[RMDB]
RNA sequence: GGGAACGACUCGAGUAGAGUCGAAAAGUAGAAUGAAGGAGUAACGCCCUGAAAUGCCUACUCUGAUACUUCGACCGGCUUCGGCUGUAAUGGCUGGAGUCUGGAGCUCGAUAAAGUCGGCGGAAGUAACAUUUCGGGUAUUCGUACCCGAAAUGUUAAAAGAAACAACAACAACAAC
Reactivity to DMS in 0.01 (KOAc 150mM, MgCl2 10mM, bicine 150mM(pH8.5), 24C), signal-to-noise 3, nucleotides 027 to 126: g010u010a000g020a250a040u000g000a210a010g000g030a030g000u020a100a070c300g000c280c010c010u010g010a120a050a060u010g020c070c000u000a000c000u010c030u020g030a190u040a040c050u010u010c030g010a090c000c000g000g030c000u000u000c010g000g030c020u000g020u000a190a050u110g020g000c010u000g010g000a010g000u000c000u050g000g000a150g010c050u000c000g000a080u030a080a120a030g000u000c010g000g000c020g020g000a040a040g000u000
Reactivity to 2A3 in 0.01 (KOAc 150mM, MgCl2 10mM, bicine 150mM(pH8.5), 24C), signal-to-noise 4, nucleotides 027 to 126: g070u070a030g020a240a070u120g040a070a010g050g020a000g010u020a070a010c000g040c000c010c020u030g060a040a030a030u180g020c000c000u000a000c000u000c030u040g030a050u030a160c010u030u030c010g050a050c030c000g000g000c010u000u000c000g000g000c000u020g080u270a160a130u270g000g000c000u000g000g050a030g010u020c000u000g000g040a060g030c000u000c030g010a020u070a060a100a060g030u020c020g000g050c040g060g030a170a010g050u050